RNA sequence: GGGAACGACUCGAGUAGAGUCGAAAAAUAAAAGAGAGUAGAUGAUUCGCGUUAAGUGUGUGUGAAUGGGAUGUCGUCACACAACGAAGCGAGAGGGCGGUGAAUCAUUGCAUCCGCUCCAAAAAAACAAAGAAGUUUUCUUCGGAAAACUUCUUUGAAAAGAAACAACAACAACAAC
Reactivity to DMS in 0.01 (KOAc 150mM, MgCl2 10mM, bicine 150mM(pH8.5), 24C), signal-to-noise 1, nucleotides 027 to 126: a120u010a100a060a130a090g010a030g010a010g010u010a300g000a030u000g000a030u000u000c010g010c030g030u030u010a040a110g030u000g030u000g000u010g020u000g000a090a050u020g020g020g000a030u000g010u010c200g000u000c000a010c000a010c000a040a010c010g000a170a170g020c030g000a070g010a100g020g030g030c020g000g010u000g020a030a020u000c030a050u000u000g020c020a020u000c000c000g010c010u000c000c040a000a000a010a090a080a030a200

The record gives the reactivity of an RNA of 177 nucleotides to DMS.
The DMS profile rests on 832 reads.
It was measured as part of the RMDB library M2PK90.
The RNA was probed in 150 mM KOAc, 10 mM MgCl2 and 150 mM bicine (pH 8.5) at 24 C.